[RMDB]
RNA sequence: GGGAACGACUCGAGUAGAGUCGAAAAGCGGGGCUUGAAACGCGGGUAGCGCGCACGCCCGGCGAAGAAGUUCGCAUACGCGGUGUGCUGGUGCCGAAGUGUCUGCUGCAACGGCACGCUUGACACCUAGAACAUACCGUAUUCGUACGGUAUGUAAGUGCAUACAAACUUUCGAGUUUGUAUGCACAAAAGAAACAACAACAACAAC
Reactivity to 2A3 in 0.01 (KOAc 150mM, MgCl2 10mM, bicine 150mM(pH8.5), 24C), signal-to-noise 3, nucleotides 027 to 156: g070c080g010g020g050g000c010u090u050g080a120a130a040c060g030c020g030g010g090u220a120g100c030g000c000g000c040a010c010g000c010c000c000g020g000c000g020a000a010g080a030a020g110u040u040c030g000c030a050u050a220c080g000c140g020g000u000g000u010g030c000u030g020g060u030g000c000c000g010a090a020g040u040g030u090c090u120g080c070u070g000c030a080a020c000g020g000c000a000c020g000c050u070u050g010a020c010a020c010c000u030a040g060a060a010c000a000u000a000c010c000g000u000a020u030u090c090g020u010a000c000g000g020u000a000u000g000u000a040a010
Reactivity to DMS in 0.01 (KOAc 150mM, MgCl2 10mM, bicine 150mM(pH8.5), 24C), signal-to-noise 2, nucleotides 027 to 156: g020c050g010g020g050g040c030u000u000g020a060a120a090c030g000c010g000g050g030u000a160g040c080g040c020g070c060a080c060g000c000c000c040g050g020c000g010a020a230g000a170a190g010u000u000c020g060c010a140u000a220c050g010c130g030g080u000g040u000g020c000u000g010g030u000g030c000c010g010a070a180g010u000g000u000c060u030g010c100u010g010c050a090a240c100g010g000c010a050c000g010c050u020u000g010a150c050a040c000c000u010a110g020a210a060c010a020u010a000c000c000g020u000a040u010u010c300g000u000a000c010g020g000u030a010u000g010u000a010a130
The record gives the reactivity of an RNA of 207 nucleotides to 2A3 and DMS. Values cover nucleotides 27 to 156. DMS adducts were read by reverse transcription with MarathonRT. Conditions: 150 mM KOAc, 10 mM MgCl2 and 150 mM bicine (pH 8.5), 24 C. For 2A3, 2,276 sequencing reads were counted. Reactivities are rounded to 0.1 and cut off at 0 and 3.